[RMDB]
RNA sequence: GGGAACGACUCGAGUAGAGUCGAAAACACCCGCAAUUCGUUGCGGGUGAGAGCACCACUCGUGCGGGAGUUAAGGCCAUACGGACAGCCGGGUGCAAAGCCAUAGCAGGUCCUUCGGGACCUGCAAGCACAGAUUAAAUUUCGAUUUAAUCUGUGCAAAAGAAACAACAACAACAAC
Reactivity to DMS in 0.01 (KOAc 150mM, MgCl2 10mM, bicine 150mM(pH8.5), 24C), signal-to-noise 4, nucleotides 027 to 126: c010a010c000c010c010g010c000a010a010u000u010c160g010u000u000g010c000g000g000g010u000g010a030g010a080g000c030a040c030c000a080c020u000c020g020u010g020c160g010g000g010a050g010u000u010a080a080g010g010c010c020a090u010a070c140g010g010a040c040a140g000c020c010g000g000g020u000g010c020a080a040a130g000c030c010a050u010a100g000c000a010g010g000u010c000c000u000u020c170g010g010g000a000c000c000u000g000c000a010a060
Reactivity to 2A3 in 0.01 (KOAc 150mM, MgCl2 10mM, bicine 150mM(pH8.5), 24C), signal-to-noise 5, nucleotides 027 to 126: c000a000c000c000c000g020c000a020a050u090u080c190g070u060u030g000c010g000g000g000u000g000a000g000a000g000c010a010c030c000a010c000u020c020g120u240g150c120g060g260g000a040g020u080u210a220a130g060g000c000c000a030u050a070c050g010g010a010c020a010g020c020c010g020g000g000u020g000c020a020a030a000g030c020c010a050u120a020g000c000a000g000g000u000c000c000u050u130c230g050g000g000a010c010c000u000g000c000a010a000